[RMDB]
RNA sequence: GGGAACGACUCGAGUAGAGUCGAAAAGCGGCGGCGCGCUAAGCAAUGGAGGCGACCCUUGAGGGAAGCAAUUCUGCAGAGACUCCUCCACUCGCGGAUGGCGGCACCAGAUCACACCGGCGGUGCAUCGUGGGUGGGCGACGGGAUCUGGCCUGUCCCAACGAUUUAACUUCGGUUAAAUCGUUGGAAAAGAAACAACAACAACAAC
Reactivity to 2A3 in 0.01 (KOAc 150mM, MgCl2 10mM, bicine 150mM(pH8.5), 24C), signal-to-noise 1, nucleotides 027 to 156: g100c080g070g000c100g020g040c060g010c000g060c140u070a100a030g000c030a000a150u160g040g030a000g000g000c030g090a100c000c000c090u060u180g050a220g050g030g000a040a020g020c050a010a180u110u050c030u060g020c020a020g020a000g040a200c000u040c010c000u000c010c000a010c010u070c060g010c070g080g050a090u200g080g050c040g070g000c000a000c020c000a030g060a060u140c020a050c030a000c110c030g080g000c020g000g000u040g030c010a020u040c010g020u040g010g020g000u090g000g020g070c040g010a000c020g020g010g000a020u020c090u060g050g000c010c000u030g050u090c010